This 177-nucleotide RNA was probed chemically with 2A3 and DMS. Source: RMDB library TTRDEL, as collected in RNAgym. The reactions ran in a buffer of 150 mM KOAc, 10 mM MgCl2 and 150 mM bicine (pH 8.5), at 24 C.
[RMDB]
RNA sequence: GGGAACGACUCGAGUAGAGUCGAAAAGAUAUGGACUCAUUGUCUUUUGACGCACAAUCGGAAACGAUUGAGCGAUAAGACACCUCGGGAGUCCUAAGUCAAAGUAACUUUCUUCGGAAAGUUACAAGAUAUUCCUAAGGUUCGCCUUAGGAAUAUCAAAAGAAACAACAACAACAAC
Reactivity to 2A3 in 0.01 (KOAc 150mM, MgCl2 10mM, bicine 150mM(pH8.5), 24C), signal-to-noise 8, nucleotides 027 to 126: g030a010u070a050u150g010g000a000c000u010c030a110u040u150g020u010c010u040u150u100u250g250a150c010g000c010a020c000a030a010u000c010g000g030a040a030a030c010g000a000u000u010g010a020g000c010g000a020u060a080a020g000a000c010a050c040c090u190c170g300g120g000a000g000u000c000c000u010a120a010g030u010c070a180a030a060g010u000a000a010c000u020u030u040c010u050u070c250g110g000a000a010a000g000u010u000a010c000a000a000
Reactivity to DMS in 0.01 (KOAc 150mM, MgCl2 10mM, bicine 150mM(pH8.5), 24C), signal-to-noise 8, nucleotides 027 to 126: g000a050u000a220u010g000g000a020c010u000c010a160u010u000g010u000c000u000u000u000u010g020a170c030g010c010a180c010a000a000u000c000g010g000a090a070a130c000g010a010u000u000g010a050g020c000g010a080u000a020a010g000a010c000a050c300c140u000c160g010g020g000a070g010u000c000c000u000a020a070g000u000c050a080a130a170g000u000a000a000c000u000u000u000c000u000u010c220g020g000a010a010a010g000u000u000a000c000a060a070